RNA sequence: GGGAACGACUCGAGUAGAGUCGAAAACUUGUUUUCGAACAAGAGACGCGGGGUCCUUUCCGGAACAGAGGGACAUGAUCUGAAGCCUCCACGGAUCAACAGCCUACCCACCUGUUCGAAAGGACGGAGGCACCCACCCUGUUCCAUUCGUGGAAAAUAUAUCAUUGGGAUUCGUCCCAAUGAUAUAAAAAGAAACAACAACAACAAC
Reactivity to DMS in 0.01 (KOAc 150mM, MgCl2 10mM, bicine 150mM(pH8.5), 24C), signal-to-noise 2, nucleotides 027 to 156: c010u000u000g010u000u000u010u010c170g020a050a000c030a040a060g000a170g010a140c140g030c070g020g010g020g020u000c010c000u010u000u000c010c110g080g040a040a040c020a040g000a170g000g020g000a140c050a260u000g000a020u010c000u000g010a100a110g030c000c030u000c000c020a300c090g010g000a050u000c020a040a080c040a150g000c040c000u000a300c090c040c050a170c120c000u000g030u000u000c020g000a070a060a090g010g000a030c010g020g010a030g050g030c020a110c060c010c000a080c050c010c030u020g000u020u000c000c000a120u000u010c120g010u000g000g010a070a050a130a200
Reactivity to 2A3 in 0.01 (KOAc 150mM, MgCl2 10mM, bicine 150mM(pH8.5), 24C), signal-to-noise 4, nucleotides 027 to 156: c010u030u010g040u080u030u070u120c190g100a040a000c010a040a000g020a020g060a070c090g080c200g100g030g020g020u040c020c020u030u000u010c050c110g150g010a020a000c020a020g110a250g070g010g040a030c020a080u070g010a000u000c000u030g040a090a020g030c000c020u000c010c000a020c020g010g020a000u020c000a020a080c040a050g120c020c030u150a160c110c030c010a230c030c070u010g010u020u010c000g010a020a010a010g010g010a000c020g000g000a000g000g020c010a070c020c020c010a050c020c010c020u070g100u070u000c010c030a050u070u110c150g060u130g050g030a040a050a090a030